[RMDB]
RNA sequence: GGGAACGACUCGAGUAGAGUCGAAAAUUGCAGAGGUUGCUGCCCCUGAUCUUGAGACCCUUGCGCUUGAGGGCCGGGUGGAGGCCCCUGUUUGCUGCGUCGAUAAAGUUCAGGUAGGGCUCCCCGGCAGAUGAUGCGAAUUCGUUCGCAUCAUCUGAAAAGAAACAACAACAACAAC
Reactivity to DMS in 0.01 (KOAc 150mM, MgCl2 10mM, bicine 150mM(pH8.5), 24C), signal-to-noise 2, nucleotides 027 to 126: u000u010g030c030a010g000a110g010g010u010u000g020c070u000g020c060c100c020c000u000g000a040u000c000u000u010g000a170g010a060c000c060c140u020u000g000c050g000c060u010u020g000a130g010g010g010c030c010g040g030g040u010g030g010a110g010g010c020c000c000c010u010g000u020u000u010g010c030u010g010c300g010u000c060g020a130u030a110a060a040g010u000u010c010a010g000g010u010a090g020g020g000c020u010c020c000c000c040g030g010